[RMDB]
RNA sequence: GGGAACGACUCGAGUAGAGUCGAAAAAUAAAUUGUCAUAUCUGGAUCCAACAGUUAAACCAUGUGAUGGUGUAUAGUGUGGUAUGGCGUAAAACAUCGGAGAAAGUACAAAAGUACAAAAAAAAAAUACUAACGAAUGAUUCGUCAUUCGUUAGUAAAAAGAAACAACAACAACAAC
Reactivity to DMS in 0.01 (KOAc 150mM, MgCl2 10mM, bicine 150mM(pH8.5), 24C), signal-to-noise 2, nucleotides 027 to 126: a080u000a050a070a060u000u000g040u010c030a000u010a040u000c000u020g000g000a060u000c030c030a130a080c060a080g000u000u000a070a110a080c040c010a020u000g040u010g010a050u000g010g000u000g010u000a080u020a030g010u010g020u000g000g040u000a020u010g010g000c010g020u000a080a040a060a090c170a040u000c120g010g030a080g010a100a100a110g000u000a020c030a070a050a060a140g000u000a010c010a000a000a010a000a020a030a120a110a070a180
Reactivity to 2A3 in 0.01 (KOAc 150mM, MgCl2 10mM, bicine 150mM(pH8.5), 24C), signal-to-noise 2, nucleotides 027 to 126: a020u110a000a020a050u100u060g000u000c000a010u040a040u000c030u050g110g060a060u010c010c020a020a020c010a040g030u050u110a190a040a020c000c000a030u130g070u080g250a090u040g060g050u010g030u010a030u060a100g090u040g000u020g070g000u010a010u030g000g000c000g030u030a000a030a000a020c010a010u060c000g020g010a070g040a050a070a050g070u040a010c020a030a300a110a050g030u020a000c050a030a020a060a000a010a000a000a000a000a050